Structure probing data (DMS and 2A3) for a 170-nucleotide construct. The 2A3 profile rests on 1,229 reads.

RNA sequence: GGGAACGACUCGAGUAGAGUCGAAAAUUGCUCUGUCCAUCAAGGAGCUCAUGUGGCUUCUAAUGAUGCAAUAAUGACUCGUUGUUUAGCUAUUCAUUCUUGUUUUAUAGAACGUGUGGAUUGGGAUAUAGCGGUGGGUUCGCCCACCGCAAAAGAAACAACAACAACAAC
Reactivity to DMS in 0.01 (KOAc 150mM, MgCl2 10mM, bicine 150mM(pH8.5), 24C), signal-to-noise 1, nucleotides 027 to 129: u020u040g000c030u030c050u000g000u000c130c010a140u050c030a060a010g030g000a010g000c000u070c150a120u070g020u080g040g040c000u000u000c000u030a060a040u030g050a040u000g000c000a020a060u060a000a000u000g020a000c020u040c010g000u000u100g020u150u000u000a080g010c070u030a030u020u020c060a000u070u000c020u000u110g030u010u090u080u000a040u000a090g030a000a120c040g040u060g130u030g010g010a030u000u050g030g000g000a020u090a070u010a000
Reactivity to 2A3 in 0.01 (KOAc 150mM, MgCl2 10mM, bicine 150mM(pH8.5), 24C), signal-to-noise 1, nucleotides 027 to 129: u030u040g100c000u000c020u020g000u000c020c100a130u040c040a110a000g020g030a000g210c030u040c020a140u170g050u200g100g000c000u000u000c040u120a000a000u090g000a000u030g000c000a040a040u210a090a020u000g020a000c010u000c200g000u050u040g080u040u010u130a010g000c050u060a000u030u040c000a000u000u000c070u030u040g100u110u140u000u050a050u080a010g190a070a050c030g030u020g060u000g000g050a120u000u020g040g040g040a000u000a000u030a120
Conditions: 150 mM KOAc, 10 mM MgCl2 and 150 mM bicine (pH 8.5), 24 C. DMS adducts were read by reverse transcription with MarathonRT.